[RMDB]
RNA sequence: GGGAACGACUCGAGUAGAGUCGAAAAGAUAUGGAUCGUCACUUUUGACGCGUUCUACUCGGAAACGAGUAAUACGCGAUAAGUGAAUCCUAAGUCAAACGAGGCUUGGGUUCGCCCAAGCCUCGAACAACAGUUGUGACUUCGGUCACAACUGUUGAAAAGAAACAACAACAACAAC
Reactivity to DMS in 0.01 (KOAc 150mM, MgCl2 10mM, bicine 150mM(pH8.5), 24C), signal-to-noise 2, nucleotides 027 to 126: g000a030u000a240u010g010g000a000u000c090g000u010c010a010c000u000u000u010u000g030a250c050g010c010g000u000u000c110u000a000c000u000c000g010g000a070a050a150c000g000a020g000u000a000a040u010a000c010g020c010g010a090u000a000a010g020u000g000a060a030u000c000c010u010a080a140g020u000c010a080a100a290c010g010a010g040g000c000u000u000g000g000g000u010u030c250g010c010c000c020a020a010g030c000c000u010c000g010a010a060
Reactivity to 2A3 in 0.01 (KOAc 150mM, MgCl2 10mM, bicine 150mM(pH8.5), 24C), signal-to-noise 1, nucleotides 027 to 126: g030a020u060a040u170g000g000a020u070c150g050u010c160a000c010u090u140u170u300g300a200c140g000c000g000u010u000c060u030a010c000u010c000g030g040a000a030a000c030g000a020g020u000a010a000u070a020c000g040c140g040a030u020a040a000g000u000g000a000a020u020c000c000u020a060a060g060u070c040a070a090a110c000g030a000g030g000c010u000u000g000g020g040u140u160c300g130c000c000c010a010a010g000c000c000u000c010g000a000a000